[RMDB]
RNA sequence: GGGAACGACUCGAGUAGAGUCGAAAAUAGACCUGAUUCGUCAGGUCUACCAGCGAGGGAGAGAGCGAGGGUCCCACGCUGCCAGGGUCGCACGCUCCCAAAGACUUCCUGAAUUCGUUCAGGAAAAAGAAUGAUUUCUGUUCGCAGAAAUCAUUCUAAAAGAAACAACAACAACAAC
Reactivity to 2A3 in 0.01 (KOAc 150mM, MgCl2 10mM, bicine 150mM(pH8.5), 24C), signal-to-noise 1, nucleotides 027 to 126: u060a010g010a000c010c000u030g020a000u000u080c130g080u010c110a000g000g000u010c010u000a010c000c010a010g090c020g070a130g010g060g000a050g020a020g000a000g070c060g040a090g030g080g040u030c000c040c000a050c010g070c070u020g060c040c080a050g030g000g030u060c000g000c050a030c050g020c030u040c000c000c000a030a090a030g070a040c030u020u010c010c010u010g030a030a020u060u100c210g040u070u000c020a010g000g000a010a030a020a010
Reactivity to DMS in 0.01 (KOAc 150mM, MgCl2 10mM, bicine 150mM(pH8.5), 24C), signal-to-noise 2, nucleotides 027 to 126: u000a020g010a000c000c000u000g000a030u000u020c190g040u000c000a000g000g010u000c000u000a010c060c040a090g010c040g000a200g000g010g000a070g010a090g010a080g000c040g020a090g010g000g000u000c000c020c010a120c060g020c030u010g000c040c090a150g000g000g000u010c050g010c070a140c060g000c070u000c010c000c010a120a090a080g010a160c200u000u000c010c000u010g000a020a020u000u010c150g000u000u000c010a000g000g010a000a010a050a100